[RMDB]
RNA sequence: GGGAACGACUCGAGUAGAGUCGAAAACGGCCGCCAUGGCGUAGCCCAGGUGGGGCACGGCCCGCGCCACGCUGCCGGUGAUGAAGGAGCUGCUGUUGCGCGCGGCGCCCGAGAUCCGGAAGCAGGCCGAAAGGGUCGUCUUCGGACGACCCUUUCGAAAAGAAACAACAACAACAAC
Reactivity to 2A3 in 0.01 (KOAc 150mM, MgCl2 10mM, bicine 150mM(pH8.5), 24C), signal-to-noise 2, nucleotides 027 to 126: c020g010g010c000c000g000c060c000a250u040g010g020c110g050u080a020g000c030c000c030a010g030g190u300g080g070g030g050c090a060c060g040g000c000c000c010g000c000g000c000c000a070c120g000c000u020g000c000c000g020g060u170g040a170u060g070a130a090g060g060a130g010c020u060g000c020u010g110u170u170g010c150g000c000g010c000g080g000c020g000c020c000c000g040a040g000a020u060c000c000g000g030a020a020g010c070a060g010g000c000
Reactivity to DMS in 0.01 (KOAc 150mM, MgCl2 10mM, bicine 150mM(pH8.5), 24C), signal-to-noise 2, nucleotides 027 to 126: c090g000g000c000c000g000c030c070a250u030g000g020c050g000u000a140g020c050c000c040a140g030g000u030g010g040g000g000c020a120c070g000g000c000c010c000g010c080g020c020c000a050c120g020c020u000g000c010c010g030g000u040g000a160u020g000a170a120g000g000a120g040c030u010g010c060u050g000u000u050g040c250g000c080g010c010g010g040c130g000c000c050c030g000a220g000a120u050c020c000g000g050a090a120g000c000a150g050g050c000
The record gives the reactivity of an RNA of 177 nucleotides to 2A3 and DMS.
Conditions: 150 mM KOAc, 10 mM MgCl2 and 150 mM bicine (pH 8.5), 24 C.
Values cover nucleotides 27 to 126.
It was measured as part of the RMDB library OK1LIB.
DMS adducts were read by reverse transcription with MarathonRT.